An RNA of 177 nucleotides, treated with DMS and 2A3 and read out base by base.
RNA sequence: GGGAACGACUCGAGUAGAGUCGAAAAUUACACCUGGCUUCACUUGUGUGACUUUUGCAAUGGGAAGAGAGAGAGAAGGUCCCCUUGGUACCUCAGCUCGGCCUUAUGGUGGCCUCUUUCCUUGAAGCACUCAACUAGUGUUCGCACUAGUUGAGUGAAAAGAAACAACAACAACAAC
Reactivity to DMS in 0.01 (KOAc 150mM, MgCl2 10mM, bicine 150mM(pH8.5), 24C), signal-to-noise 2, nucleotides 027 to 126: u000u000a110c100a060c000c030u000g000g010c070u000u010c060a130c070u000u000g010u000g000u000g020a110c090u000u020u010u000g010c080a070a060u010g020g000g000a030a030g010a060g010a140g010a090g000a050g010a130a040g020g000u000c020c010c100c160u020u000g050g040u030a030c030c010u000c080a150g000c020u000c070g000g060c050c010u000u010a110u020g010g000u010g010g000c080c000u010c020u000u000u000c010c060u000u010g010a090a100g010
Reactivity to 2A3 in 0.01 (KOAc 150mM, MgCl2 10mM, bicine 150mM(pH8.5), 24C), signal-to-noise 1, nucleotides 027 to 126: u100u060a010c050a040c030c030u030g080g010c050u120u050c070a090c150u100u110g010u010g000u030g270a170c030u130u090u120u180g060c020a090a070u080g010g030g010a020a020g000a000g000a020g000a000g000a010g000a180a030g030g010u020c000c000c000c040u040u130g030g030u040a010c020c010u010c050a040g030c040u040c030g000g000c010c000u140u070a250u190g190g030u040g110g030c000c000u030c000u000u000u050c050c000u000u060g050a050a000g040
Conditions: 150 mM KOAc, 10 mM MgCl2 and 150 mM bicine (pH 8.5), 24 C. It was measured as part of the RMDB library RFMREP.